This 177-nucleotide RNA was probed chemically with 2A3 and DMS.
RNA sequence: GGGAACGACUCGAGUAGAGUCGAAAACGAGGGGAUCGCCCACUAAAGAGUAGAGGAAUUCUCGGAAAGCUCUCCCAAGAAGAACCAGAAUCCCUCAAGAGAGAGGAGAAUCCCCAUGACGCUGGAACAUUAACUGGAAGUUCGCUUCCAGUUAAUGAAAAGAAACAACAACAACAAC
Reactivity to 2A3 in 0.01 (KOAc 150mM, MgCl2 10mM, bicine 150mM(pH8.5), 24C), signal-to-noise 1, nucleotides 027 to 126: c040g010a130g000g000g000g000a010u020c020g080c050c010c010a050c020u100a080a100a050g140a060g070u220a040g030a020g000g000a010a000u020u030c060u040c080g050g030a240a050a000g030c020u000c040u040c000c020c000a000a030g000a010a010g010a030a030c000c000a000g010a010a010u000c020c020c010u000c020a030a020g060a000g000a000g010a030g030g000a050g010a050a100u030c010c010c020c000a000u030g030a020c070g000c150u080g050g040a050a000
Reactivity to DMS in 0.01 (KOAc 150mM, MgCl2 10mM, bicine 150mM(pH8.5), 24C), signal-to-noise 4, nucleotides 027 to 126: c110g000a110g010g000g000g020a040u000c020g020c220c020c010a210c080u010a060a080a170g010a160g020u000a100g010a020g000g010a050a010u000u000c000u000c180g020g000a080a120a130g010c050u000c060u000c130c110c130a090a130g010a070a040g000a090a170c010c010a040g000a040a040u010c000c000c000u000c010a040a140g010a080g000a040g010a130g000g020a130g000a070a090u000c000c000c000c000a100u000g010a070c150g010c110u000g010g020a110a180
Source information: For 2A3, 1,139 sequencing reads were counted. The DMS profile rests on 2,461 reads. The RNA was probed in 150 mM KOAc, 10 mM MgCl2 and 150 mM bicine (pH 8.5) at 24 C. Values cover nucleotides 27 to 126.